RNA sequence: GGGAACGACUCGAGUAGAGUCGAAAACAAAACUGACCACCUAUGAGGUCAUACAUCGUCAUAGAAAAACAAAACAAAACUGACCAGCUAUGAGGUCAUACAUCGUCAUACCAAACAAAACAACAAAACCAUGCCAUAUCUUCGGAUAUGGCAUGGUAAAAGAAACAACAACAACAAC
Reactivity to 2A3 in 0.01 (KOAc 150mM, MgCl2 10mM, bicine 150mM(pH8.5), 24C), signal-to-noise 4, nucleotides 027 to 126: c010a000a050a010a060c120u080g010a020c000c000a010c010c000u050a040u050g030a020g020g000u010c030a020u220a080c100a110u150c070g080u000c010a020u020a000g110a110a070a030a020a010c090a010a160a040a040c100a040a110a010a120c080u050g010a010c010c000a010g060c020u090a100u110g100a040g020g020u000c010a000u060a010c040a040u180c070g150u030c000a010u020a120c020c010a030a000a110c090a020a090a030a050c080a060a030c050a040a150a020
Reactivity to DMS in 0.01 (KOAc 150mM, MgCl2 10mM, bicine 150mM(pH8.5), 24C), signal-to-noise 1, nucleotides 027 to 126: c160a230a060a050a120c300u040g000a000c000c010a080c280c160u000a000u000g000a000g020g000u000c070a000u000a000c300a030u000c150g030u000c000a000u000a000g000a000a200a140a240a040c300a040a040a070a100c250a060a050a000a150c300u000g000a000c010c000a000g000c060u000a160u000g000a100g070g000u000c000a000u000a100c050a030u000c120g000u000c090a000u000a140c010c100a210a110a260c250a070a000a060a140c100a010a260c280a040a000a060
An RNA of 177 nucleotides, treated with 2A3 and DMS and read out base by base. The data come from the RNA Mapping Database (RMDB), library OK1LIB. Reactivities are given for positions 27 through 126.